[RMDB]
RNA sequence: GGGAACGACUCGAGUAGAGUCGAAAAUGAUCAAGACCGGUCGCAAGCUGGAGCUGAUGGUGGACGAUGAGCUGCAAGAGAUUCGCAAUCUAAACGGCAAUCCCACGGUGGUCAGCCUGCCGAGGGAGUACCACUGGGGAUUCGUCCCCAGUGGUACAAAAGAAACAACAACAACAAC
Reactivity to 2A3 in 0.01 (KOAc 150mM, MgCl2 10mM, bicine 150mM(pH8.5), 24C), signal-to-noise 2, nucleotides 027 to 126: u140g030a040u100c060a030a050g080a110c030c030g020g060u090c020g000c050a020a030g010c030u040g030g030a030g030c060u040g010a040u070g030g070u040g020g020a040c040g010a020u040g050a020g050c000u020g030c050a120a030g010a000g000a120u150u080c040g000c090a020a050u010c010u120a080a020a070c040g060g000c060a030a060u000c000c000c000a000c020g000g000u000g010g030u080c040a050g110c000c010u000g040c010c030g000a040g000g060g000a080
Reactivity to DMS in 0.01 (KOAc 150mM, MgCl2 10mM, bicine 150mM(pH8.5), 24C), signal-to-noise 2, nucleotides 027 to 126: u000g030a050u000c010a060a070g020a110c030c020g000g000u010c090g000c080a050a180g010c030u000g000g010a140g000c040u000g020a060u000g010g020u010g000g000a130c080g040a120u000g000a070g010c030u000g000c070a070a070g000a040g020a080u010u010c080g030c030a070a070u000c040u000a020a130a130c120g010g000c060a090a170u000c010c000c000a100c070g000g000u010g010g000u010c170a130g010c160c030u000g020c040c030g020a100g000g000g020a090
The data come from the RNA Mapping Database (RMDB), library OK2TST. This 177-nucleotide RNA was probed chemically with 2A3 and DMS. High 2A3 reactivity points to a flexible backbone, as in loops and unpaired stretches. 2A3 adducts were read by reverse transcription with SuperScript II with manganese. For 2A3, 2,070 sequencing reads were counted. Values cover nucleotides 27 to 126. The RNA was probed in 150 mM KOAc, 10 mM MgCl2 and 150 mM bicine (pH 8.5) at 24 C.